[RMDB]
RNA sequence: GGGAACGACUCGAGUAGAGUCGAAAAAAUGAUAGACGGCGGGGAGCAAGUGGAAUAUCCAUUAAAGCCGAUCAUAGAAAAUGCCAAACCCACAUUUCGUCAGAUAAUGAUGCAUUUCAGUGACGCAUAAUGUCUUGGAGUUCGCUCCAAGACAUUAAAAAGAAACAACAACAACAAC
Reactivity to DMS in 0.01 (KOAc 150mM, MgCl2 10mM, bicine 150mM(pH8.5), 24C), signal-to-noise 3, nucleotides 027 to 126: a010a060u000g000a010u010a090g020a300c000g010g030c040g040g000g000g020a080g010c110a100a090g000u040g000g020a210a080u040a150u030c010c020a030u010u020a060a100a210g000c030c000g060a040u000c030a040u010a060g000a040a010a020a040u000g000c000c070a120a060a100c010c000c040a230c080a070u040u010u010c050g010u030c190a080g000a080u030a080a040u000g020a070u020g010c110a020u020u000u000c050a140g020u000g000a100c090g000c210a120
Reactivity to 2A3 in 0.01 (KOAc 150mM, MgCl2 10mM, bicine 150mM(pH8.5), 24C), signal-to-noise 2, nucleotides 027 to 126: a020a000u100g000a010u030a030g300a050c010g000g000c000g050g000g020g020a100g060c080a230a050g030u000g000g090a100a100u100a170u150c000c000a000u040u050a040a060a000g000c030c010g070a030u070c010a000u000a000g060a090a080a000a030u150g080c100c100a150a020a100c040c000c000a000c040a080u030u060u090c040g010u010c050a010g040a100u060a250a060u120g130a050u080g060c130a190u070u070u090c090a010g080u010g100a000c010g030c040a060